[RMDB]
RNA sequence: GGGAACGACUCGAGUAGAGUCGAAAACUCUUCACAAUCUGCCUACCACCACAUCUCAUUGCCUCCAGGCCAAUGAUCAUGGUAACAUCUCAGAACAAUCUUGCCAGGGGCGUGCUUUGAGUCACAGUAGUUAGAACUACUUCGGUAGUUCUAACUAAAAAGAAACAACAACAACAAC
Reactivity to 2A3 in 0.01 (KOAc 150mM, MgCl2 10mM, bicine 150mM(pH8.5), 24C), signal-to-noise 5, nucleotides 027 to 126: c010u020c000u130u120c060a030c030a050a120u010c010u060g010c010c000u010a040c010c020a020c030c010a010c000a100u040c040u010c030a030u020u100g020c010c000u060c030c030a040g010g000c040c010a040a030u100g020a060u060c040a070u080g040g000u020a050a020c030a080u040c040u020c070a030g030a080a040c030a080a050u010c020u040u080g030c010c020a040g020g020g010g010c030g010u030g000c010u110u090u110g030a030g030u060c040a030c020a150g120
Reactivity to DMS in 0.01 (KOAc 150mM, MgCl2 10mM, bicine 150mM(pH8.5), 24C), signal-to-noise 6, nucleotides 027 to 126: c060u000c040u010u010c070a080c100a080a100u010c060u000g020c050c030u010a090c050c020a060c060c050a050c090a070u010c070u010c040a040u000u010g010c030c000u000c070c080a100g010g000c120c090a050a050u000g010a030u010c070a090u000g000g010u010a080a070c090a060u000c040u010c070a110g010a090a060c190a060a080u000c050u000u000g020c030c020a130g000g010g010g010c090g010u000g010c040u010u010u010g000a090g020u010c050a070c120a110g010

Record summary:
The data come from the RNA Mapping Database (RMDB), library OK2TST. This 177-nucleotide RNA was probed chemically with 2A3 and DMS. The RNA was probed in 150 mM KOAc, 10 mM MgCl2 and 150 mM bicine (pH 8.5) at 24 C. The 2A3 profile rests on 6,800 reads.